[RMDB]
The data come from the RNA Mapping Database (RMDB), library OK1LIB.
An RNA of 177 nucleotides, treated with 2A3 and DMS and read out base by base.
For DMS the reverse transcriptase was MarathonRT.
For 2A3, 1,982 sequencing reads were counted.
RNA sequence: GGGAACGACUCGAGUAGAGUCGAAAACACAGCUGCCGACCGAUAUUUCACACGCAGAUAAAGCCUGUGUGCGCUGAUGACCCUGACGAUGUCAAAAGGGAGGCUUCCGAAAAGUGGAUUGAACGACCGCGUAGACAAAUUUCGAUUUGUCUACGCGAAAAGAAACAACAACAACAAC
Reactivity to 2A3 in 0.01 (KOAc 150mM, MgCl2 10mM, bicine 150mM(pH8.5), 24C), signal-to-noise 4, nucleotides 027 to 126: c030a000c010a030g030c020u060g010c000c000g030a050c000c020g010a020u010a120u150u120u080c020a030c020a010c030g030c000a000g050a070u240a190a090a030g100c030c010u010g020u040g000u020g020c040g020c060u020g000a070u090g050a070c020c030c000u040g010a050c040g130a140u170g030u080c060a090a080a010a020g000g010g000a020g000g000c000u050u030c080c020g060a030a050a000a060g100u130g030g030a110u050u120g070a080a050c070g040a050c020
Reactivity to DMS in 0.01 (KOAc 150mM, MgCl2 10mM, bicine 150mM(pH8.5), 24C), signal-to-noise 3, nucleotides 027 to 126: c050a090c060a050g030c040u010g000c000c020g030a110c120c020g000a130u020a080u020u030u050c120a090c070a080c120g020c070a050g000a170u030a090a090a170g010c120c010u020g000u000g000u000g010c060g000c080u010g020a090u000g000a040c040c030c000u000g020a100c080g000a060u000g000u030c080a080a120a190a160g010g000g000a210g020g000c030u000u000c010c030g010a070a040a070a090g010u010g010g000a080u010u010g040a100a220c140g000a150c250